[RMDB]
RNA sequence: GGGAACGACUCGAGUAGAGUCGAAAAUGACUACCUUUGUCUCAGAGAUUGACGCCGGAGUAUUUCGUACCAUUUACAAUCUAACGCAGGAAAUCGCCGCUUUACUAGAAAACCUUUGUGGCGAACCAGUAAGCCCAGAACUAGAUCUACUAGUCGAGCAUCAACGUAUGUUCGCAUACGUUGAUGCAAAAGAAACAACAACAACAAC
Reactivity to 2A3 in 0.01 (KOAc 150mM, MgCl2 10mM, bicine 150mM(pH8.5), 24C), signal-to-noise 2, nucleotides 027 to 156: u090g000a020c020u030a110c050c030u020u060u080g040u020c020u010c050a020g020a030g030a100u020u130g060a100c070g000c080c020g000g010a050g000u100a130u050u140u060c040g010u040a130c000c020a020u120u040u070a090c060a060a030u050c020u090a060a060c030g040c040a020g000g160a040a070a250u050c010g000c030c000g010c030u070u140u130a080c070u060a010g160a090a080a050a040c030c000u060u100u040g020u000g010g000c040g000a030a130c030c000a030g030u040a020a000g000c000c000c020a030g050a000a000c020u010a000g020a080u100c010u120a120c000u000a070g050u000c010g030a000
Chemical mapping of a 207-nucleotide RNA with 2A3. Source: RMDB library OK3TST, as collected in RNAgym. The RNA was probed in 150 mM KOAc, 10 mM MgCl2 and 150 mM bicine (pH 8.5) at 24 C.